[RMDB]
RNA sequence: GGGAACGACUCGAGUAGAGUCGAAAAGUGUGUGCAUGUGGGAUGAUUGACAGUUAUCUGAGUCCUCACAGCCACCGGUUGGCCUUCAACGCCCAGGGAUCCAGUUCUGAUGGCAGCGGUCGGUCUCUCUGUGUCCAUGGGUUGAUUGACAUGGGAGCCAUAGCGAUAGCUUCGGCUAUCGCUAUGGAAAAGAAACAACAACAACAAC
Reactivity to 2A3 in 0.01 (KOAc 150mM, MgCl2 10mM, bicine 150mM(pH8.5), 24C), signal-to-noise 1, nucleotides 027 to 156: g220u240g000u010g080u100g000c080a250u030g060u050g030g020g050a030u100g000a000u100u150g110a130c040a060g160u280u250a060u300c000u060g030a050g050u080c010c010u050c000a000c000a000g010c010c000a010c020c000g030g000u020u040g020g010c010c010u000u050c020a030a030c050g000c000c000c000a000g050g000g000a040u010c030c000a020g020u140u080c060u090g040a060u140g040g000c000a010g080c060g210g030u050c040g040g020u030c000u000c000u000c000u000g020u020g000u000c000c050a000u030g000g000g000u060u170g160a290u050u050g000a090c080a080u070g030g000g000a030g000
This 207-nucleotide RNA was probed chemically with 2A3. It was measured as part of the RMDB library OK3TST. Values cover nucleotides 27 to 156. 2A3 adducts were read by reverse transcription with SuperScript II with manganese. 2A3 is a SHAPE reagent: it acylates the 2'-hydroxyl of flexible nucleotides of all four kinds. The reactions ran in a buffer of 150 mM KOAc, 10 mM MgCl2 and 150 mM bicine (pH 8.5), at 24 C.